[RMDB]
RNA sequence: GGGAACGACUCGAGUAGAGUCGAAAAAUGUAUCGUACACAACUGCACAGUACAUGCUAGCUAUGACGUGUUGAUACACCAGUCGCGGCCACAUGUGUAGUACCAACCGUAUAUAACAUCGAUAUAUACACUGGCGCUAAUAUACGCACUGGCUAGCCACUUCCCUUGCAUUCGUGCAAGGGAAGUGAAAAGAAACAACAACAACAAC
Reactivity to DMS in 0.01 (KOAc 150mM, MgCl2 10mM, bicine 150mM(pH8.5), 24C), signal-to-noise 1, nucleotides 027 to 156: a060u010g000u000a020u000c030g070u000a030c000a110c040a220a210c130u000g040c030a060c030a050g030u000a060c060a090u010g070c030u000a060g050c070u000a080u000g010a080c160g010u000g020u020u030g010a110u000a010c010a020c010c000a110g010u040c150g050c000g000g000c030c060a060c120a090u000g000u020g070u000a080g030u000a080c010c020a100a060c020c050g070u020a010u000a040u000a030a160c050a200u000c150g000a270u010a030u000a000u000a010c000a070c070u000g020g020c040g010c020u000a040a130u000a120u000a060c010g030c020a060c030u020g010g030c000u000a060g020c060
Reactivity to 2A3 in 0.01 (KOAc 150mM, MgCl2 10mM, bicine 150mM(pH8.5), 24C), signal-to-noise 5, nucleotides 027 to 156: a000u130g010u020a030u060c060g060u160a010c020a010c010a090a070c050u110g020c030a060c010a080g130u220a090c050a140u130g030c040u090a060g000c010u090a050u190g080a140c060g030u010g010u010u030g010a030u010a040c010a010c040c010a040g080u110c050g010c030g020g050c040c030a040c010a100u050g030u010g000u040a060g010u030a020c000c020a040a040c050c100g010u010a020u000a000u010a040a120c110a090u240c100g150a040u010a010u000a000u000a070c000a020c060u010g020g000c030g000c050u040a060a060u100a060u060a190c010g010c010a000c020u000g030g000c010u030a050g020c030

The record gives the reactivity of an RNA of 207 nucleotides to DMS and 2A3. For DMS the reverse transcriptase was MarathonRT. For 2A3, 2,926 sequencing reads were counted. The RNA was probed in 150 mM KOAc, 10 mM MgCl2 and 150 mM bicine (pH 8.5) at 24 C.